[RMDB]
RNA sequence: GGGAACGACUCGAGUAGAGUCGAAAAUCACUCUUGUUUCACUUCAGAUCGUAUAAAUCUUUCGCCUUUUACUAAAGAUUUCCGUGGAGUGGAACAAUUAAGAGUUUUACUCAAUUUUUUGAUGCCCCACUAAGUCUUAGUUCGCUAAGACUUAGUGAAAAGAAACAACAACAACAAC
Reactivity to DMS in 0.01 (KOAc 150mM, MgCl2 10mM, bicine 150mM(pH8.5), 24C), signal-to-noise 5, nucleotides 027 to 126: u010c120a060c040u000c080u000u000g010u000u000u010c000a000c000u000u000c010a080g010a140u010c060g010u010a160u010a060a010a020u000c010u000u000u000c140g010c150c220u000u010u010u010a120c040u010a010a020a020g000a040u000u000u000c280c060g010u000g000g010a010g010u010g010g010a000a010c000a040a050u010u010a080a060g000a130g010u000u000u020u000a110c070u000c010a040a010u000u000u000u000u000u000g010a060u010g000c040c000c020
Reactivity to 2A3 in 0.01 (KOAc 150mM, MgCl2 10mM, bicine 150mM(pH8.5), 24C), signal-to-noise 7, nucleotides 027 to 126: u050c000a000c010u010c010u010u050g010u000u010u010c000a010c000u000u010c010a070g030a300u120c070g030u150a140u110a300a030a010u010c000u010u010u030c030g070c040c020u150u230u150u300a090c020u040a020a010a010g010a000u020u020u030c070c050g040u040g000g010a010g000u010g000g000a000a010c000a000a000u050u040a060a020g010a010g010u030u040u100u100a040c010u010c030a080a110u060u140u090u060u120u090g030a030u100g020c000c000c000
Structure probing data (DMS and 2A3) for a 177-nucleotide construct. Values cover nucleotides 27 to 126. For 2A3 the reverse transcriptase was SuperScript II with manganese. For 2A3, 9,190 sequencing reads were counted. The DMS profile rests on 5,949 reads.